[RMDB]
RNA sequence: GGGAACGACUCGAGUAGAGUCGAAAAGUCCAAAAUUGAUUCGGCGGCCCUGUCAUGAGGCCGAAACGAAGGCACGUACCCCUUCGAACGGCGUCGGGGAGUCAGCGGCUAUAUAUGCGCCUAAUGCUAAAGUCGUGCUGGUUCGCCAGCACGACAACAUAUUCUUUUAGUUCGCUAAAAGAAUAUGAAAAGAAACAACAACAACAAC
Reactivity to DMS in 0.01 (KOAc 150mM, MgCl2 10mM, bicine 150mM(pH8.5), 24C), signal-to-noise 2, nucleotides 027 to 156: g000u000c010c020a080a080a190a150u010u010g000a150u000u010c050g020g020c030g000g000c010c000c020u030g040u010c160a120u000g020a060g010g010c010c010g000a000a060a160c020g040a040a050g000g020c070a100c110g010u010a190c120c060c020c010u000u000c000g010a070a300c060g010g030c040g010u010c030g000g000g000g000a100g000u000c050a100g010c030g020g000c030u000a110u000a120u000a060u000g000c050g020c010c010u000a070a110u000g010c020u000a050a080a130g030u000c000g050u000g000c000u000g010g010u000u010c300g000c020c000a010g010c010a020c000g010a010c000a020a040
Reactivity to 2A3 in 0.01 (KOAc 150mM, MgCl2 10mM, bicine 150mM(pH8.5), 24C), signal-to-noise 4, nucleotides 027 to 156: g050u000c020c000a070a020a040a100u150u150g020a030u080u040c040g040g000c020g010g050c030c000c020u020g060u040c080a120u130g010a010g030g010c000c020g010a010a000a000c010g000a010a000g020g020c120a010c220g190u240a110c030c020c000c000u000u000c000g020a050a030c010g010g000c030g180u020c040g010g020g000g030a050g030u030c000a010g010c030g110g000c050u000a010u040a040u020a030u300g100c040g000c010c020u060a040a030u110g020c060u090a130a050a030g000u000c000g020u000g000c000u010g020g070u020u040c180g040c030c000a000g000c000a000c010g000a000c000a010a000

Structure probing data (DMS and 2A3) for a 207-nucleotide construct. For DMS the reverse transcriptase was MarathonRT. For 2A3, 3,504 sequencing reads were counted.